Structure probing data (DMS and 2A3) for a 177-nucleotide construct. The data come from the RNA Mapping Database (RMDB), library M2PK90. Reactivities are rounded to 0.1 and cut off at 0 and 3. For 2A3 the reverse transcriptase was SuperScript II with manganese. The 2A3 profile rests on 1,610 reads. The reactions ran in a buffer of 150 mM KOAc, 10 mM MgCl2 and 150 mM bicine (pH 8.5), at 24 C.
[RMDB]
RNA sequence: GGGAACGACUCGAGUAGAGUCGAAAAUGAAAUCAAAAUAAGAGAGGAAAUGUAGGAGAUUAGAAUCCACUGGAAAUCGUCCUAUAGUCACAAUAUGACCGAAAUAACCACCACCAAAAUAAAAAAACAUUAAGUGUAAGUUCGCUUACACUUAAUGAAAAGAAACAACAACAACAAC
Reactivity to DMS in 0.01 (KOAc 150mM, MgCl2 10mM, bicine 150mM(pH8.5), 24C), signal-to-noise 2, nucleotides 027 to 126: u010g020a040a100a140u020c070a060a040a100a080u000a110a100g010a140g000a120g010g010a050a130a130u010g020u010a050g000g010a170g020a060u000u010a080g010a140a130u000c050c040a050c100u000g000g010a070a020a060u000c010g000u010c000c010u000a050u000a060g020u010c030a050c100a050a050u000a300u000g000a050c030c050g000a020a080a070u020a090a080c010c020a030c050c040a050c070c030a080a070a060a060u030a020a020a040a050a030a050a130
Reactivity to 2A3 in 0.01 (KOAc 150mM, MgCl2 10mM, bicine 150mM(pH8.5), 24C), signal-to-noise 2, nucleotides 027 to 126: u090g000a040a030a040u070c060a010a000a020a190u200a280a010g100a020g000a010g090g010a130a070a040u100g000u020a050g020g020a020g020a050u080u070a040g050a100a040u000c060c100a100c180u130g000g020a010a110a020u040c050g060u040c020c000u000a040u010a030g020u030c050a010c030a210a030u100a060u270g040a030c050c020g070a060a040a010u040a030a020c020c010a020c000c030a000c010c000a000a000a110a000u200a030a180a010a010a000a010a000